[RMDB]
About this RNA
Structure probing data (2A3 and DMS) for a 177-nucleotide construct. For 2A3, 11,708 sequencing reads were counted. For 2A3 the reverse transcriptase was SuperScript II with manganese. The reactions ran in a buffer of 150 mM KOAc, 10 mM MgCl2 and 150 mM bicine (pH 8.5), at 24 C. DMS (dimethyl sulfate) methylates the pairing face of unpaired adenines and cytosines.

RNA sequence: GGGAACGACUCGAGUAGAGUCGAAAAAAGGCGUCAGCAUUUCCAACGAACACCGAGCACCUUUUCCCUCCCCGUCAACUGUUCGACGGAUGUGUCGCCUGUUAGGGAUUUGUCUUCGCCAGGGUCACGUGAUUAAUCGAUUCGUCGAUUAAUCACGAAAAGAAACAACAACAACAAC
Reactivity to 2A3 in 0.01 (KOAc 150mM, MgCl2 10mM, bicine 150mM(pH8.5), 24C), signal-to-noise 9, nucleotides 027 to 126: a000a000g060g000c040g040u080c040a050g010c030a110u050u060u030c020c000a050a060c050g030a030a010c020a010c030c030g010a010g020c010a050c010c010u000u020u060u040c020c010c000u040c030c020c010c000g050u050c040a120a080c090u130g050u170u100c040g010a020c010g020g010a040u050g050u020g010u030c020g020c020c010u030g040u060u090a100g000g030g030a030u060u030u070g090u020c030u040u050c030g040c010c010a030g050g010g010u060c050a010
Reactivity to DMS in 0.01 (KOAc 150mM, MgCl2 10mM, bicine 150mM(pH8.5), 24C), signal-to-noise 5, nucleotides 027 to 126: a060a020g000g010c010g020u020c070a080g020c060a060u000u020u000c020c000a130a290c060g000a060a070c020a080c120c040g000a120g010c040a070c030c010u010u010u010u010c000c010c010u010c050c020c010c010g010u020c100a070a090c140u010g030u020u000c010g000a070c280g010g000a030u020g020u010g010u010c020g000c040c020u010g000u010u020a050g010g010g010a100u000u000u010g020u000c030u000u010c030g020c040c010a040g000g010g010u000c070a160